This 207-nucleotide RNA was probed chemically with 2A3. Values cover nucleotides 27 to 156. The reactions ran in a buffer of 150 mM KOAc, 10 mM MgCl2 and 150 mM bicine (pH 8.5), at 24 C. As a SHAPE reagent, 2A3 marks flexible, mostly unpaired nucleotides at the ribose 2'-OH.
RNA sequence: GGGAACGACUCGAGUAGAGUCGAAAAAACGUUGCAUGAUCGUAAAACAUGCCCGGCUUACCGUGAGCCGCCUUUGAAAGAAAGGUUUACACGGACUCUGUUGCGUUACGCAUGUACCUAACUUGUGAAAACGGCAUCUUGUUCGCAAGAUGCCGAAGUCCAUCAUUACCUUCGGGUAAUGAUGGACAAAAGAAACAACAACAACAAC
Reactivity to 2A3 in 0.01 (KOAc 150mM, MgCl2 10mM, bicine 150mM(pH8.5), 24C), signal-to-noise 1, nucleotides 027 to 156: a000a000c000g000u000u000g020c000a000u000g010a040u180c020g080u240a200a040a000a000c000a000u010g000c000c000c000g000g000c000u040u080a070c000c000g020u000g000a000g000c000c000g000c000c010u010u000u000g130a150a040a000g090a050a000a000g010g010u000u000u040a020c010a000c050g010g010a050c020u130c030u110g070u070u040g030c030g080u110u070a080c090g030c020a020u030g010u070a050c000c030u040a100a240c020u090u060g050u020g090a100a040a010a030c000g030g000c000a000u010c000u020u020g000u050u060c050g030c060a000a000g000a000u040g000c020c000g000a000a000